Chemical mapping of a 177-nucleotide RNA with 2A3 and DMS. The RNA was probed in 150 mM KOAc, 10 mM MgCl2 and 150 mM bicine (pH 8.5) at 24 C.

RNA sequence: GGGAACGACUCGAGUAGAGUCGAAAAUGCGGAACGGAAACCGCUAAAGUGAGUGGCGCACCAUAGAAGCCUGGAUUUUGCCCCAAGGUAUGGCUGCCUGGUAUCUACGAAGAACUGUAGAAAAACAAAUCUGAUGUCUUUUCGAAGACAUCAGAUUAAAAGAAACAACAACAACAAC
Reactivity to 2A3 in 0.01 (KOAc 150mM, MgCl2 10mM, bicine 150mM(pH8.5), 24C), signal-to-noise 7, nucleotides 027 to 126: u120g000c020g010g040a110a050c050g060g120a040a080a040c010c000g000c030u020a040a050a030g140u100g100a050g040u120g030g030c030g020c030a050c030c010a020u050a090g120a070a030g050c010c000u020g050g010a100u080u100u090u220g070c020c010c000c020a040a060g030g000u120a060u110g050g010c030u010g030c010c010u020g020g020u060a060u010c000u010a000c020g040a080a150g070a170a040c060u070g020u040a010g000a100a060a010a000a000c070a020
Reactivity to DMS in 0.01 (KOAc 150mM, MgCl2 10mM, bicine 150mM(pH8.5), 24C), signal-to-noise 6, nucleotides 027 to 126: u030g010c010g010g000a100a090c140g030g010a100a110a070c010c010g020c010u000a030a060a100g010u020g000a070g020u020g010g020c040g010c050a120c020c020a060u010a100g010a100a180g010c030c020u000g000g000a070u010u010u020u030g000c040c040c020c080a070a080g020g010u020a030u010g010g010c070u010g010c030c030u000g000g000u030a060u010c010u000a020c030g010a090a140g010a090a060c120u040g040u000a030g000a030a080a070a070a120c170a070
The data come from the RNA Mapping Database (RMDB), libraries RFM100 and RFMREP. 2A3 adducts were read by reverse transcription with SuperScript II with manganese.